RNA sequence: GGGAACGACUCGAGUAGAGUCGAAAAUUCGGAGAGUCUGACAUCCGAACCAUACACGGAUGUGCCUCGCCGAACAGUCUACGGCGAGCUUAAGCGCUGGGGACGCCCAACGCAUCACAAAGACUGAGUGAUGAACCAGAAGUAUGGACUGGUUGCGGCUAAACAAGUGGUUCGCCACUUGUUUAGCAAAAGAAACAACAACAACAAC
Reactivity to DMS in 0.01 (KOAc 150mM, MgCl2 10mM, bicine 150mM(pH8.5), 24C), signal-to-noise 1, nucleotides 027 to 156: u000u010c030g010g000a020g000a030g010u000c090u000g040a040c030a060u000c000c000g030a040a060c060c020a010u000a030c010a300c010g000g010a080u000g060u000g060c100c010u000c020g040c000c010g000a050a050c070a090g010u000c010u000a100c000g020g000c000g010a170g030c100u000u000a100a160g010c020g030c010u010g000g020g020g000a060c100g020c000c030c000a060a080c080g010c020a080u000c000a040c040a110a140a100g010a190c050u010g010a130g020u020g010a150u000g000a110a120c050c050a010g010a110a070g000u000a010u000g040g000a300c060u000g000g020u010u020g010c060g040
Reactivity to 2A3 in 0.01 (KOAc 150mM, MgCl2 10mM, bicine 150mM(pH8.5), 24C), signal-to-noise 3, nucleotides 027 to 156: u070u020c010g040g000a070g010a000g120u060c060u280g170a020c000a010u000c000c000g010a020a080c020c020a020u020a040c010a010c000g000g010a000u000g020u060g130c030c000u000c000g000c000c000g030a030a030c030a040g060u030c020u030a020c020g000g000c020g020a070g040c040u130u130a090a040g020c020g000c010u010g000g000g080g010a010c040g060c010c020c010a030a030c110g020c010a010u020c010a020c050a080a180a050g080a130c080u090g070a050g080u020g010a060u030g030a020a020c000c010a010g010a130a000g040u020a020u010g000g020a030c010u000g030g000u010u060g010c080g020